[RMDB]
RNA sequence: GGGAACGACUCGAGUAGAGUCGAAAAAGGGGAAAAGAAGAGCUAGAGCAACUCCCACACUCAUGAGCGUCCUCAUACUGUUCUGGGCGCUUCUCACAGGUGCUUCUUUUAGUGUCUCCCAUUGGCCCGCUCUGGCAGUCUUCGGACUGCCAGAGCGAAAAGAAACAACAACAACAAC
Reactivity to 2A3 in 0.01 (KOAc 150mM, MgCl2 10mM, bicine 150mM(pH8.5), 24C), signal-to-noise 1, nucleotides 027 to 126: a040g100g010g020g020a060a060a000a020g050a010a040g020a040g010c040u070a000g000a000g050c100a060a180c020u040c040c000c000a000c010a000c000u120c000a040u070g000a000g000c060g000u040c040c010u000c020a070u070a300c040u170g010u210u070c010u030g000g040g000c020g010c130u020u010c010u000c010a100c000a050g070g000u050g000c020u030u040c000u040u110u040u070a210g020u110g100u040c000u000c070c020c000a020u010u050g090g020c000c000
Chemical mapping of a 177-nucleotide RNA with 2A3. The RNA was probed in 150 mM KOAc, 10 mM MgCl2 and 150 mM bicine (pH 8.5) at 24 C. Reactivities are given for positions 27 through 126.